[RMDB]
RNA sequence: GGGAACGACUCGAGUAGAGUCGAAAAGAUAUGGACGAGUAAGUGGCGAAGAACAUGGGAGGCGGACCCAUCGGAAACGAUGGGUGCCAUCCCAUGGGAGCCAUAUCUCGUCCUAAGUCAAAACAACAAACAUACUGUUCGCAGUAUGUUUGUUGAAGUAACUCGAGUACUUCGGUACUCGAGUUACAAAAGAAACAACAACAACAAC
Reactivity to 2A3 in 0.01 (KOAc 150mM, MgCl2 10mM, bicine 150mM(pH8.5), 24C), signal-to-noise 1, nucleotides 027 to 156: g000a010u000a000u080g000g020a020c000g010a000g020u020a300a210g010u050g010g000c000g080a260a030g010a000a040c020a010u010g000g000g000a050g040g080c200g040g010a030c000c010c000a000u000c000g000g000a000a030a000c000g000a000u000g010g070g000u000g030c010c000a060u000c030c010c000a000u000g000g000g000a000g000c010c010a040u010a010u020c000u010c000g000u000c000c000u010a000a000g000u010c010a000a000a090a120c000a000a000c000a000a000a000c000a000u000a000c000u010g060u070u150c300g010c120a010g020u000a000u000g010u000u010u000g000u000u010g000a010a010